Conditions: 150 mM KOAc, 10 mM MgCl2 and 150 mM bicine (pH 8.5), 24 C. Structure probing data (2A3 and DMS) for a 207-nucleotide construct. The 2A3 profile rests on 950 reads. For DMS the reverse transcriptase was MarathonRT. For DMS, 2,022 sequencing reads were counted. DMS (dimethyl sulfate) methylates the pairing face of unpaired adenines and cytosines.
RNA sequence: GGGAACGACUCGAGUAGAGUCGAAAAAUAGGAUGGCAAGACUCGAUGAGGAUCCUAUUGCCGGGAAUCUGGUAUUAAAGACCGCAGAGCUAAUUACGGCAAGACCUCCAAUAUUUCUUGAUGAGAAUGAUAAUGAACUUGAUAAGACAAGAGAUACUGAAUAGUGCCUUUUCGAAGGCACUAUUCAAAAAGAAACAACAACAACAAC
Reactivity to 2A3 in 0.01 (KOAc 150mM, MgCl2 10mM, bicine 150mM(pH8.5), 24C), signal-to-noise 1, nucleotides 027 to 156: a000u110a040g060g000a030u050g010g010c040a080a020g020a040c050u050c100g060a070u070g010a030g060g000a030u020c030c020u020a050u040u020g020c030c010g000g050g010a040a060u030c040u090g010g020u060a110u110u180a180a130a160g030a010c030c060g020c110a020g000a010g040c010u040a020a100u220u020a020c040g010g000c030a000a010g040a060c000c000u000c030c000a040a030u040a060u120u100u000c010u110u070g000a040u070g000a020g040a080a020u080g050a030u080a160a050u060g020a080a030c000u020u010g030a020u080a130a080g020a030c030a000a030g000a000g020a010u050a150c060
Reactivity to DMS in 0.01 (KOAc 150mM, MgCl2 10mM, bicine 150mM(pH8.5), 24C), signal-to-noise 1, nucleotides 027 to 156: a090u000a030g030g030a100u000g050g040c010a110a120g010a080c040u010c040g010a140u000g030a250g000g010a110u010c010c010u000a070u010u000g000c010c050g000g000g010a100a040u000c040u010g000g030u000a090u000u010a110a080a190g010a060c060c040g020c040a130g000a130g030c040u010a170a060u000u020a060c050g000g060c000a080a060g000a070c040c000u010c010c000a120a110u000a060u010u000u010c030u010u010g000a170u000g010a060g040a080a080u010g010a090u000a050a070u010g010a070a020c060u000u000g000a090u000a080a180g000a100c040a050a030g000a090g010a100u000a090c130